An RNA of 177 nucleotides, treated with DMS and 2A3 and read out base by base.
RNA sequence: GGGAACGACUCGAGUAGAGUCGAAAACCGGCAUACGGUGGCGUUCAGAUUGAUACAUCCCGCCGACUCGGAGGCGGAGCGUGCGUUUUAGGACGAAGCCAAGGUUCUGACAACGACAGCGGGUGUCGAUGAUGGGAUCGUUCGCGAUCCCAUCAUCAAAAGAAACAACAACAACAAC
Reactivity to DMS in 0.01 (KOAc 150mM, MgCl2 10mM, bicine 150mM(pH8.5), 24C), signal-to-noise 2, nucleotides 027 to 126: c040c000g010g000c080a070u000a000c060g000g050u010g000g040c020g000u000u000c090a030g000a200u010u000g000a100u010a090c160a070u040c070c000c080g020c040c040g010a180c140u000c060g000g000a300g000g000c050g000g000a090g000c130g000u020g000c070g000u010u000u040u060a020g000g000a050c040g000a140a280g000c080c160a060a060g000g000u000u000c000u000g000a010c180a030a070c010g020a040c000a070g000c000g040g010g060u020g000u000c010
Reactivity to 2A3 in 0.01 (KOAc 150mM, MgCl2 10mM, bicine 150mM(pH8.5), 24C), signal-to-noise 4, nucleotides 027 to 126: c010c000g020g000c030a020u040a030c010g170g010u010g000g010c000g010u020u020c020a040g020a090u070u140g040a070u120a120c020a050u130c020c020c010g000c000c020g100a160c070u060c210g220g020a060g010g000c020g020g010a000g020c050g060u100g070c040g010u010u020u080u170a150g040g020a020c080g090a090a020g000c050c000a070a060g090g000u060u000c010u010g020a030c070a080a000c090g040a000c010a040g050c030g010g000g040u010g000u010c030
2A3 adducts were read by reverse transcription with SuperScript II with manganese. It was measured as part of the RMDB library OK1LIB. For DMS, 1,618 sequencing reads were counted.